[RMDB]
RNA sequence: GGGAACGACUCGAGUAGAGUCGAAAAUACGCGUCGAAUAUUUGCUGCCCAGCUGACUCCAAACUCACAAAGAGGAAACAACACGUAACCACUUACAGCCCAGCUGCUAGUGUCCUUUAAGUACAUAACACGUAUAUCUGUUCGCAGAUAUACGUGUAAAAGAAACAACAACAACAAC
Reactivity to DMS in 0.01 (KOAc 150mM, MgCl2 10mM, bicine 150mM(pH8.5), 24C), signal-to-noise 6, nucleotides 027 to 126: u020a070c070g020c030g010u000c030g020a130a080u020a050u020u010u000g010c040u010g000c000c020c020a110g010c030u010g010a070c030u000c030c030a040a070a110c080u000c040a060c150a070a080a080g000a100g000g010a090a080a070c140a050a060c130a060c070g000u010a030a100c110c020a040c040u000u000a070c120a090g000c010c040c060a050g010c030u000g000c020u000a040g010u010g000u010c010c020u000u010u030a050a090g010u020a070c150a090u020a080
Reactivity to 2A3 in 0.01 (KOAc 150mM, MgCl2 10mM, bicine 150mM(pH8.5), 24C), signal-to-noise 9, nucleotides 027 to 126: u160a020c050g010c020g050u060c040g090a120a040u080a110u110u130u100g020c020u040g010c000c000c010a030g000c020u030g030a050c010u000c030c020a070a080a090c020u040c030a060c060a080a180a030g040a030g020g090a060a070a020c100a040a020c030a020c070g060u090a040a040c040c010a030c050u050u090a030c020a020g020c010c060c030a040g010c020u020g010c010u040a020g040u020g030u110c010c000u070u120u090a140a050g050u050a060c030a070u150a090